[RMDB]
An RNA of 207 nucleotides, treated with DMS and 2A3 and read out base by base. The RNA was probed in 150 mM KOAc, 10 mM MgCl2 and 150 mM bicine (pH 8.5) at 24 C. 2A3 adducts were read by reverse transcription with SuperScript II with manganese.

RNA sequence: GGGAACGACUCGAGUAGAGUCGAAAAACGGUGCGGAAGUUCGCGCUUCCGUGAAACGCGAAAAUCGGACGGUGGCUGCAAGUCCCAUCGCAAAACCGCGGCAAGUGGAGUUAGCGAGAGGAGGCUGAAACCAUCCAACACUUCGGUGUUGGAUGAACCAUGAACUGUCUUUCGAGACAGUUCAUGGAAAAGAAACAACAACAACAAC
Reactivity to DMS in 0.01 (KOAc 150mM, MgCl2 10mM, bicine 150mM(pH8.5), 24C), signal-to-noise 2, nucleotides 027 to 156: a030c050g070g030u010g000c000g010g010a060a060g020u000u010c240g010c210g000c000u000u000c010c100g010u030g010a100a090a050c030g000c020g000a080a040a080a130u000c050g010g020a100c030g020g010u000g010g020c030u020g020c060a030a080g010u000c010c010c000a090u000c020g000c010a040a090a050a110c000c010g000c050g010g000c030a090a070g050u010g020g000a100g000u010u000a180g030c000g000a050g010a060g050g010a090g000g000c060u000g010a130a020a150c100c000a050u020c000c000a000a020c000a010c000u000u000c250g060g020u000g000u000u010g000g010a000u000g010a030a100
Reactivity to 2A3 in 0.01 (KOAc 150mM, MgCl2 10mM, bicine 150mM(pH8.5), 24C), signal-to-noise 4, nucleotides 027 to 156: a000c050g020g030u100g000c000g010g020a010a010g030u110u160c050g010c020g010c050u020u000c010c000g010u010g040a080a100a000c080g010c030g020a020a040a020a100u100c030g020g020a000c010g010g050u060g040g010c040u060g020c060a040a000g000u010c040c000c000a020u000c000g000c000a020a030a030a040c040c000g000c030g100g040c120a150a080g020u030g040g040a100g030u050u090a030g020c010g030a010g020a080g020g030a040g000g000c010u040g030a070a010a020c030c000a000u000c000c000a000a000c000a000c000u040u060c220g080g000u000g000u000u000g000g000a000u010g000a010a000